[RMDB]
RNA sequence: GGGAACGACUCGAGUAGAGUCGAAAAGAUAUGGAUGAGGCUGCGAUAAGCCUGAUAUCGGAAACGAUAUAGGCUUUUGACGCAGUCCUCAUCCUAAGUCAAAGGUCAGGCCUUCGGGCCUGACCAAGAACUCUUCAUUGUUCGCAAUGAAGAGUUCAAAAGAAACAACAACAACAAC
Reactivity to 2A3 in 0.01 (KOAc 150mM, MgCl2 10mM, bicine 150mM(pH8.5), 24C), signal-to-noise 2, nucleotides 027 to 126: g010a010u040a020u100g000g010a000u020g000a000g010g000c030u000g000c050g170a200u120a290a010g000c010c000u100g030a020u020a020u030c000g010g000a040a020a000c010g020a010u000a010u000a010g000g000c000u100u090u130u300g270a200c040g000c000a000g000u010c000c010u000c000a010u020c000c000u010a000a010g000u000c020a060a110a100g000g020u020c010a000g020g040c040c000u210u300c300g050g010g010c000c010u030g000a000c020c000a000a000
Reactivity to DMS in 0.01 (KOAc 150mM, MgCl2 10mM, bicine 150mM(pH8.5), 24C), signal-to-noise 2, nucleotides 027 to 126: g010a020u000a170u000g000g010a010u010g000a010g000g000c010u000g000c000g030a120u010a020a020g020c000c000u000g010a010u000a010u000c010g010g000a060a040a100c000g010a000u000a000u000a010g000g010c000u000u010u010u010g010a210c120g010c010a010g020u020c010c010u010c000a010u000c010c010u000a010a060g000u000c020a100a180a140g010g020u000c000a040g000g010c000c000u010u030c280g050g030g010c000c000u020g000a010c000c020a010a030

Source information
An RNA of 177 nucleotides, treated with 2A3 and DMS and read out base by base. The reactions ran in a buffer of 150 mM KOAc, 10 mM MgCl2 and 150 mM bicine (pH 8.5), at 24 C. 2A3 adducts were read by reverse transcription with SuperScript II with manganese. The data come from the RNA Mapping Database (RMDB), library TTRDES.